[RMDB]
An RNA of 177 nucleotides, treated with 2A3 and DMS and read out base by base.
The reactions ran in a buffer of 150 mM KOAc, 10 mM MgCl2 and 150 mM bicine (pH 8.5), at 24 C.
2A3 adducts were read by reverse transcription with SuperScript II with manganese.
For 2A3, 14,358 sequencing reads were counted.
High 2A3 reactivity points to a flexible backbone, as in loops and unpaired stretches.

RNA sequence: GGGAACGACUCGAGUAGAGUCGAAAAUUCUUCACAUCACAGUAGGCAGCGUGAUAGUGACACCCUUUCAGUACCUACAGGAGAGGCUAAGUUGCUUUUGUCCUCGCAGAAGCCUCCGGCAUUAGAGCCUAAUACGUAGGUUCGCCUACGUAUUAGGAAAAGAAACAACAACAACAAC
Reactivity to 2A3 in 0.01 (KOAc 150mM, MgCl2 10mM, bicine 150mM(pH8.5), 24C), signal-to-noise 9, nucleotides 027 to 126: u060u000c010u080u080c030a020c010a050u040c010a010c020a060g130u170a080g120g040c060a040g040c050g040u040g020a040u050a110g030u030g020a030c020a100c030c010c000u020u100u040c040a040g030u070a120c010c020u060a070c060a050g020g110a110g030a010g050g000c010u080a110a070g100u100u050g040c020u040u040u080u140g100u060c020c030u030c040g000c010a020g020a120a010g000c000c000u020c020c020g040g010c010a050u050u170a080g040a020g130
Reactivity to DMS in 0.01 (KOAc 150mM, MgCl2 10mM, bicine 150mM(pH8.5), 24C), signal-to-noise 8, nucleotides 027 to 126: u010u020c060u010u010c030a060c080a070u010c030a050c060a090g010u010a060g000g010c080a110g000c090g000u000g000a060u010a060g010u000g000a070c230a110c090c020c000u000u010u000c070a090g010u000a090c040c020u000a060c090a130g020g010a090g020a030g000g010c030u010a070a090g010u010u000g000c050u000u010u010u010g000u010c060c040u000c060g010c060a060g000a090a060g010c010c010u000c020c030g010g000c080a090u020u020a090g010a100g010
Source information: For DMS the reverse transcriptase was MarathonRT. It was measured as part of the RMDB library OK1LIB.